RNA sequence: GGGAACGACUCGAGUAGAGUCGAAAAGUUGAUGCGCACCGACAACACUCUGUCGGUCAGGGUGACGUUGAGGCCUGUGACCGGCGUUAAUGCGGCAAUCCCGGAAUCUGGCAUGUGCAGCAUCCUACCACCUGCUUGUGUUCGCACAAGCAGGUGGAAAAGAAACAACAACAACAAC
Reactivity to DMS in 0.01 (KOAc 150mM, MgCl2 10mM, bicine 150mM(pH8.5), 24C), signal-to-noise 1, nucleotides 027 to 126: g000u100u000g000a020u000g010c020g020c030a110c040c030g030a100c040a030a300c110a060c050u000c060u000g070u000c080g020g010u000c000a060g000g050g000u000g000a180c220g000u000u000g000a180g020g000c000c000u000g000u000g000a300c040c020g000g000c110g000u000u000a020a060u000g000c040g000g040c000a120a140u000c130c000c000g000g000a080a140u000c110u000g000g000c000a210u000g000u000g000c020a060g020c050a020u000c000c050u000a210
About this RNA: The data come from the RNA Mapping Database (RMDB), library OK2TST. Structure probing data (DMS) for a 177-nucleotide construct. The DMS profile rests on 657 reads. Values are in units of 0.01, from 0 to 300, in steps of 10. The RNA was probed in 150 mM KOAc, 10 mM MgCl2 and 150 mM bicine (pH 8.5) at 24 C.